[RMDB]
RNA sequence: GGGAACGACUCGAGUAGAGUCGAAAAUGCAACUGCUGAGGGAUCAGGAUAAUCAUCCGCAGAUAAAUAUAACUGCUAAAAAUAAUACACAAACUUACGCAAUGGCAGCCUAAACAGCACCAUGCGUGCCUGAUUUUUGCUCUCUGAUGGCAAUUUGCUAUGCAUUGGAGUUCGCUCCAAUGCAUAGAAAAGAAACAACAACAACAAC
Reactivity to DMS in 0.01 (KOAc 150mM, MgCl2 10mM, bicine 150mM(pH8.5), 24C), signal-to-noise 1, nucleotides 027 to 156: u010g020c040a070a100c100u000g030c000u010g040a040g010g050g010a040u000c010a030g000g000a040u010a060a050u020c020a080u010c040c070g000c020a030g020a160u010a050a100a160u000a090u000a060a140c050u010g000c000u040a000a040a050a060a130u000a050a100u000a080c040a100c030a040a040a100c050u000u000a040c030g010c010a080a090u010g000g020c000a110g030c000c010u010a100a090a080c110a050g010c010a060c000c010a030u020g000c030g020u010g020c040c010u000g030a050u000u000u000u000u000g040c010u000c060u000c000u000g050a240u000g020g020c050a020a180u010u000u010g000
Reactivity to 2A3 in 0.01 (KOAc 150mM, MgCl2 10mM, bicine 150mM(pH8.5), 24C), signal-to-noise 6, nucleotides 027 to 156: u120g010c030a050a030c070u070g000c030u010g010a000g000g010g000a010u000c000a010g070g000a270u040a050a040u070c030a020u030c030c020g000c010a020g020a070u170a130a300a010u180a040u070a150a100c000u000g020c010u090a050a030a040a050a030u180a060a060u210a070c070a000c030a060a170a030c060u230u140a010c010g010c040a050a220u000g010g000c010a010g000c020c000u050a060a040a010c020a000g000c000a000c000c000a010u010g000c010g000u000g010c010c010u040g070a130u050u020u040u090u150g050c010u020c000u000c030u100g100a120u080g040g010c000a010a040u030u030u120g030